[RMDB]
RNA sequence: GGGAACGACUCGAGUAGAGUCGAAAAGACAAGAAUAAGAGGGACAAGAAUCUGACCUGCAGCUCCUCGUGGUGUCACUCGGAAACGUGCUCAACGCGCGGCCGACGCAGGCAGAAAGUAAGAAGAAGAUACCGUACGCAUUCGUGCGUACGGUAUCAAAAGAAACAACAACAACAAC
Reactivity to 2A3 in 0.01 (KOAc 150mM, MgCl2 10mM, bicine 150mM(pH8.5), 24C), signal-to-noise 3, nucleotides 027 to 126: g090a040c070a000a020g120a140a050u210a060a050g010a060g080g010g000a020c050a080a040g070a080a140u010c010u020g120a280c000c000u030g020c010a070g050c040u040c000c000u040c050g010u060g010g020u020g030u030c040a000c040u050c040g070g060a120a060a060c090g000u000g010c040u070c170a000a030c030g010c000g000c000g030g000c010c020g020a030c080g000c000a000g000g000c000a000g000a000a030a000g040u130a070a060g020a120a010g100a020a020
Reactivity to DMS in 0.01 (KOAc 150mM, MgCl2 10mM, bicine 150mM(pH8.5), 24C), signal-to-noise 2, nucleotides 027 to 126: g030a090c140a070a010g000a150a000u030a160a070g000a060g030g000g050a080c000a130a140g000a140a090u000c000u000g020a070c000c010u010g000c040a080g010c300u010c010c040u020c030g000u010g010g000u010g000u050c000a000c060u030c030g040g040a000a040a060c070g000u000g050c060u010c100a000a040c010g000c010g000c080g000g000c140c000g000a160c170g050c000a000g000g000c010a000g000a000a150a130g000u000a050a070g060a120a100g020a230a090